This 177-nucleotide RNA was probed chemically with DMS. The DMS profile rests on 841 reads. For DMS the reverse transcriptase was MarathonRT. The RNA was probed in 150 mM KOAc, 10 mM MgCl2 and 150 mM bicine (pH 8.5) at 24 C.
RNA sequence: GGGAACGACUCGAGUAGAGUCGAAAAGAUAUGGAUUCGUAGGUACCACCCACUAUGGACAACAGCCACCAUUCGGAAACGAAUGUGUGGACAUGUCCACGUGGGUGGUACCUACGAAUCCUAAGUCCUAGGGAUAACACUUCGGUGUUAUCCCUAGAAAAGAAACAACAACAACAAC
Reactivity to DMS in 0.01 (KOAc 150mM, MgCl2 10mM, bicine 150mM(pH8.5), 24C), signal-to-noise 1, nucleotides 027 to 126: g000a150u010a270u010g020g000a020u000u000c000g000u000a010g000g010u000a000c000c000a010c000c000c000a020c010u000a230u000g020g020a010c030a040a120c300a210g000c000c000a010c010c010a000u010u000c000g040g010a110a120a260c040g010a020a000u010g000u020g040u020g000g010a000c120a080u000g000u030c000c000a070c300g020u000g000g010g020u000g000g030u000a000c000c000u020a010c050g010a000a000u000c000c000u000a000a050g000u000c000